The record gives the reactivity of an RNA of 177 nucleotides to DMS and 2A3. Reactivities are given for positions 27 through 126. The 2A3 profile rests on 822 reads.
[RMDB]
RNA sequence: GGGAACGACUCGAGUAGAGUCGAAAACGGAUGGCAGAAAGAAGAAAGCCCCGAAGGUCAAUUUUCAUUAACCAACGAGGCUGUCUCCAUACUGAACAUAUGCAGAUUAGCCUCUUACCCGUCGCAAAACCAACCGGAAAUUCGUUUCCGGUUGGUUAAAAGAAACAACAACAACAAC
Reactivity to DMS in 0.01 (KOAc 150mM, MgCl2 10mM, bicine 150mM(pH8.5), 24C), signal-to-noise 1, nucleotides 027 to 126: c120g000g000a120u010g000g000c060a080g000a150a070a070g000a180a110g000a050a180a080g000c020c000c130c150g000a110a220g000g000u000c000a020a060u000u100u010u160c210a010u030u000a050a010c070c000a050a300c210g000a020g010g010c000u000g040u000c010u050c090c000a190u000a000c030u050g000a110a110c180a300u000a010u000g040c300a050g000a110u010u020a080g000c000c000u000c000u000u000a110c040c030c000g020u010c090g000c110a030a050
Reactivity to 2A3 in 0.01 (KOAc 150mM, MgCl2 10mM, bicine 150mM(pH8.5), 24C), signal-to-noise 2, nucleotides 027 to 126: c050g010g040a050u120g010g000c020a020g150a130a210a020g060a190a000g040a180a230a000g010c040c060c020c020g070a030a020g000g000u010c030a010a040u090u120u140u070c040a050u050u100a040a030c010c010a040a070c070g020a000g000g000c000u010g000u010c000u030c040c010a000u000a000c020u060g140a180a010c030a070u050a020u010g000c000a020g000a000u170u300a010g040c000c020u050c000u000u020a090c010c000c000g050u070c030g010c150a000a000